Description:
Structure probing data (DMS) for a 177-nucleotide construct. Source: RMDB library RFMREP, as collected in RNAgym. For DMS, 4,669 sequencing reads were counted. Values cover nucleotides 27 to 126. The RNA was probed in 150 mM KOAc, 10 mM MgCl2 and 150 mM bicine (pH 8.5) at 24 C.

[RMDB]
RNA sequence: GGGAACGACUCGAGUAGAGUCGAAAACCCGCUUGCGAUAACGCUAUCACUGCGUUGGCCCGGUCCCUUCGGCUUCGGAUUCCUCAGCCCCCAGCCCCCCGAAGCAGUCGGGAUCGGGCCUGUACGCCCUAAUUGUCUAGUUCGCUAGACAAUUAGGAAAAGAAACAACAACAACAAC
Reactivity to DMS in 0.01 (KOAc 150mM, MgCl2 10mM, bicine 150mM(pH8.5), 24C), signal-to-noise 4, nucleotides 027 to 126: c000c010c010g010c220u010u010g000c030g010a140u000a060a070c060g010c020u010a100u000c180a110c190u010g010c000g010u000u000g000g010c000c010c010g010g000u000c000c010c000u000u000c010g010g000c010u000u000c010g030g020a260u010u010c050c030u010c110a130g020c050c010c010c020c030a150g000c020c010c030c080c010c000g010a010a020g020c010a020g010u000c100g010g000g000a010u000c020g000g000g010c000c000u000g000u010a040c050g020c040